Chemical mapping of a 170-nucleotide RNA with 2A3 and DMS. The DMS profile rests on 24,080 reads. High 2A3 reactivity points to a flexible backbone, as in loops and unpaired stretches.

[RMDB]
RNA sequence: GGGAACGACUCGAGUAGAGUCGAAAAUUCGGGGAAGGUCUCCCAAGAAGAACCAGGAACACCCCAAGAAGAGGAGACUUCCCCAAGGGUAGGUGGAACGCCAGGGAACAAGGAAAUAGGAGAAGGAAACGAUCGAAGUUCGCUUCGAUCAAAAGAAACAACAACAACAAC
Reactivity to 2A3 in 0.01 (KOAc 150mM, MgCl2 10mM, bicine 150mM(pH8.5), 24C), signal-to-noise 7, nucleotides 027 to 129: u080u040c060g000g010g000g000a020a050g080g060u010c010u000c010c010c010a020a020g050a050a010g040a040a070c080c060a040g050g030a060a040c040a110c030c000c000c020a000a040g120a050a010g070a050g000g000a010g000a010c000u010u020c000c010c000c010a020a030g010g000g010u080a030g000g070u100g050g010a040a020c030g020c010c020a000g010g010g000a020a040c020a020a030g020g000a030a040a020u090a050g020g010a050g000a020a020g020g000a060a060a010c100
Reactivity to DMS in 0.01 (KOAc 150mM, MgCl2 10mM, bicine 150mM(pH8.5), 24C), signal-to-noise 6, nucleotides 027 to 129: u050u040c110g050g000g020g020a030a020g000g040u020c000u000c010c010c000a140a090g030a060a040g000a060a050c080c060a150g000g050a100a100c110a160c070c020c030c000a080a060g000a070a070g000a110g010g010a040g020a060c050u000u020c000c010c000c020a000a020g020g030g030u000a000g000g000u050g050g020a030a050c000g020c080c000a040g000g020g020a040a080c070a040a040g010g000a030a060a050u030a070g000g020a040g020a060a040g030g080a030a020a070c170